[RMDB]
RNA sequence: GGGAACGACUCGAGUAGAGUCGAAAAGUCCCGGUGAGGAAUCUAAGACCAUAGGAAGUGCCGACUUUAAACAGCAGCUGCUGGUCUCCUUUGCAAGUGUCCAUCCUUCGACCAUAACCUUUGUGGUUGUUCCAACCGGAUUCGUCCGGUUGGAACAAAAAGAAACAACAACAACAAC
Reactivity to 2A3 in 0.01 (KOAc 150mM, MgCl2 10mM, bicine 150mM(pH8.5), 24C), signal-to-noise 2, nucleotides 027 to 126: g110u000c010c000c000g000g090u020g010a090g060g040a000a120u070c030u070a020a000g030a020c060c020a060u050a070g060g020a050a040g000u060g090c010c000g060a090c040u060u090u060a070a100a010c040a020g060c000a000g000c000u170g000c030u030g000g020u000c010u030c010c010u010u000u100g000c070a050a070g030u040g050u010c030c030a050u080c000c000u000u120c030g090a030c000c000a090u110a050a040c000c040u030u060u140g120u240g030g000u070
Reactivity to DMS in 0.01 (KOAc 150mM, MgCl2 10mM, bicine 150mM(pH8.5), 24C), signal-to-noise 1, nucleotides 027 to 126: g000u010c020c000c010g040g100u000g000a110g020g010a110a070u070c030u000a170a070g000a090c060c000a090u030a070g050g020a140a050g000u050g050c000c080g000a000c020u020u010u170a010a070a130c050a060g020c050a180g020c100u040g000c000u000g000g000u060c040u000c050c000u060u000u070g000c070a090a090g040u000g000u000c040c050a130u030c030c040u010u000c020g040a110c050c060a040u010a130a150c090c040u020u000u040g010u020g000g050u030